[RMDB]
This 207-nucleotide RNA was probed chemically with DMS and 2A3.
RNA sequence: GGGAACGACUCGAGUAGAGUCGAAAAGCUAGUCGGAGACGACUAGCAACGAUCAGUUCGCUGAUCGGAACGUGCAUUCAAGUACGCUAGAAGCACGAAUAGGCGACGCGUAGCGUACAACUGAGAAAGCAGAUAACAAAAAUAAAAAGGCGUCGCGCCACUAGCCUGGUUUCGACCAGGCUAGUGGAAAAGAAACAACAACAACAAC
Reactivity to DMS in 0.01 (KOAc 150mM, MgCl2 10mM, bicine 150mM(pH8.5), 24C), signal-to-noise 1, nucleotides 027 to 156: g010c010u000a000g060u000c000g040g010a300g010a300c000g020a100c000u020a020g010c000a070a000c040g010a010u000c000a050g010u000u000c300g080c080u000g010a020u000c010g000g000a080a100c010g000u000g000c000a240u030u000c070a040a170g060u010a000c030g030c020u070a070g000a150a100g000c000a080c000g010a170a050u000a100g050g000c020g010a050c030g010c010g010u000a020g200c030g040u030a000c000a080a300c030u000g040a100g000a170a090a170g010c000a090g000a290u030a060a140c060a030a170a000a110a160u000a000a140a030a140a080g000g000c010g050u000c010g010c050g030
Reactivity to 2A3 in 0.01 (KOAc 150mM, MgCl2 10mM, bicine 150mM(pH8.5), 24C), signal-to-noise 3, nucleotides 027 to 156: g000c000u000a000g000u000c020g000g030a020g010a100c000g000a000c000u000a000g000c000a000a010c000g000a000u010c000a000g030u040u120c140g010c090u000g000a000u000c000g000g010a020a020c010g000u030g000c070a190u020u050c070a150a040g010u000a000c010g000c000u000a010g020a100a010g030c020a000c060g030a050a100u210a190g100g010c010g000a000c010g010c020g020u050a020g000c000g000u000a010c010a020a050c050u060g010a030g110a190a090a020g120c040a020g040a090u220a210a080c120a070a110a050a020a010u250a090a130a010a000a000g090g000c000g010u000c010g000c000g000